[RMDB]
RNA sequence: GGGAACGACUCGAGUAGAGUCGAAAAGCUAUAUUCGUAUAGCCACUCUGAUAUGGACGAUCCCACAGCGCACAGGGCACUAUGGUCGGAAACGACCAUAAACCCUGUGAACUACGCUGUGGAUCGUCCUAAGUCGCGCAGGUACCUUCGGGUACAAUAGAUAAGUGGUUUUCGAACCACUUAUCUAAAAAGAAACAACAACAACAAC
Reactivity to 2A3 in 0.01 (KOAc 150mM, MgCl2 10mM, bicine 150mM(pH8.5), 24C), signal-to-noise 2, nucleotides 027 to 156: g020c010u010a010u000a000u100u170c270g090u050a000u020a040g010c010c010a110c060u130c070u070g040a030u020a070u220g000g000a010c000g010a010u100c060c030c010a000c010a010g000c020g000c000a000c000a010g000g020g040c070a050c130u050a000u010g010g000u000c010g000g020a090a110a090c000g020a000c000c000a010u010a010a000a010c000c020c010u000g010u010g000a000a000c010u100a050c030g000c000u010g000u010g000g000a010u000c000g000u000c000c000u000a000a000g000u000c010g010c020g060c140a090g180g000u040a000c000c000u160u300c300g100g010g000u020a010c000a000a100
Reactivity to DMS in 0.01 (KOAc 150mM, MgCl2 10mM, bicine 150mM(pH8.5), 24C), signal-to-noise 2, nucleotides 027 to 156: g010c010u000a000u000a030u000u000c240g060u000a030u000a000g000c010c030a150c050u010c010u020g000a130u000a240u000g010g000a040c000g000a020u000c010c010c010a000c010a030g010c010g000c000a070c010a030g010g020g010c000a170c180u000a020u000g010g020u000c000g030g000a180a120a250c010g010a040c000c000a000u000a000a120a050c020c010c000u000g020u010g010a030a160c020u010a080c000g020c000u010g000u010g020g000a000u000c000g020u000c000c010u000a000a060g000u000c010g040c040g000c030a160g010g040u010a000c000c020u000u020c250g080g050g010u000a000c010a080a170
Chemical mapping of a 207-nucleotide RNA with 2A3 and DMS. It was measured as part of the RMDB library RNAMAK. The reactions ran in a buffer of 150 mM KOAc, 10 mM MgCl2 and 150 mM bicine (pH 8.5), at 24 C. DMS adducts were read by reverse transcription with MarathonRT.